[RMDB]
RNA sequence: GGGAACGACUCGAGUAGAGUCGAAAAGGUGCAGAGUGGGAAAAUCUGAGUUCGGUCAUCUUUGUUGUUCGUCCUACCGCAGUAUAUUCCUAAACACUAUGAAAUGACCCUAGUUGGUCCAUGAUCACCAAUGCAUGAUGUUCGCAUCAUGCAUUGGAAAAGAAACAACAACAACAAC
Reactivity to DMS in 0.01 (KOAc 150mM, MgCl2 10mM, bicine 150mM(pH8.5), 24C), signal-to-noise 4, nucleotides 027 to 126: g010g030u010g030c050a060g000a100g020u000g000g000g000a070a060a140a130u010c020u000g010a080g040u000u010c040g000g000u020c020a060u010c060u000u000u020g000u000u000g010u020u000c040g000u000c010c010u000a120c050c050g030c080a030g010u030a080u010a140u000u000c000c010u010a060a070a110c160a080c160u030a100u000g000a050a130a070u020g000a020c030c000c040u030a100g010u020u010g010g000u000c040c100a030u000g000a130u000c080a120
Reactivity to 2A3 in 0.01 (KOAc 150mM, MgCl2 10mM, bicine 150mM(pH8.5), 24C), signal-to-noise 4, nucleotides 027 to 126: g040g020u040g000c050a020g020a050g060u150g010g020g020a030a080a000a080u040c010u000g010a020g020u090u070c020g010g030u000c010a010u010c050u030u050u080g030u010u040g050u050u030c020g000u010c010c010u010a020c030c000g000c030a000g020u030a080u000a030u140u040c010c000u050a080a130a020c060a030c090u130a110u150g130a030a090a090u060g040a040c010c020c000u040a140g040u090u150g020g000u050c070c040a070u120g040a090u120c050a000

This 177-nucleotide RNA was probed chemically with DMS and 2A3.
Conditions: 150 mM KOAc, 10 mM MgCl2 and 150 mM bicine (pH 8.5), 24 C.